[RMDB]
RNA sequence: GGGAACGACUCGAGUAGAGUCGAAAAGCAAAGAGUCAAAAAAAUAGAGAGCUUUGCGAGACCUACCAUGGGUGAAGAGAUACCAUCCAAGGAGCUGAAGAGAAAUCUCACUUUAGACGCCUGGGGAAAAAGACCCUUUCGUUCGCGAAAGGGUCAAGUCAACUACUUAGUUCGCUAAGUAGUUGACAAAAGAAACAACAACAACAAC
Reactivity to 2A3 in 0.01 (KOAc 150mM, MgCl2 10mM, bicine 150mM(pH8.5), 24C), signal-to-noise 1, nucleotides 027 to 156: g030c010a010a010a000g030a020g060u090c050a130a180a100a160a010a000a030u300a100g050a010g000a030g040c000u030u020u020g000c010g010a010g000a020c010c020u030a060c060c050a070u160g000g000g020u030g050a120a080g030a030g010a030u070a080c040c000a050u030c020c020a070a050g040g020a000g020c060u050g020a060a040g080a010g050a050a110a100u050c040u030c030a030c030u080u070u040a060g010a150c050g050c100c030u050g000g000g000g090a000a110a000a000a000g010a010c010c010c000u000u000u000c040g020u040u010c230g000c000g060a000a020a020g000g000g000u000c010a010a000